An RNA of 207 nucleotides, treated with 2A3 and read out base by base. Values are in units of 0.01, from 0 to 300, in steps of 10. The reactions ran in a buffer of 150 mM KOAc, 10 mM MgCl2 and 150 mM bicine (pH 8.5), at 24 C.

[RMDB]
RNA sequence: GGGAACGACUCGAGUAGAGUCGAAAAUCAGAGAAGACAUUCAUGUGCUAAAGGCCAGUCCUGAAAUUCAAAUUCUUAUGAGACUAAGAAACUCAUACAAAGAUGAGGAUGACUUUUAAAAUCAUAAGUCUCCUAUAUAUCAGUAAUACAUAGUCUACCGCUGCAUUAUAUUCGUAUAAUGCAGCGGAAAAGAAACAACAACAACAAC
Reactivity to 2A3 in 0.01 (KOAc 150mM, MgCl2 10mM, bicine 150mM(pH8.5), 24C), signal-to-noise 1, nucleotides 027 to 156: u000c000a000g060a000g010a160a000g000a030c050a020u050u000c010a010u160g020u060g080c010u100a140a050a070g040g000c020c030a020g070u030c000c020u010g040a070a140a000u070u090c010a000a070a230u060u040c010u000u050a010u030g000a000g000a000c010u060a120a000g020a050a060a000c000u000c000a050u010a110c050a060a190a050g060a020u060g020a000g010g010a020u060g010a000c070u000u080u060u160a080a220a060a060u270c010a080u040a130a010g000u030c000u000c000c000u030a030u000a000u000a010u270c000a000g000u080a050a030u040a220c090a090u250a280g020u220c010u290a070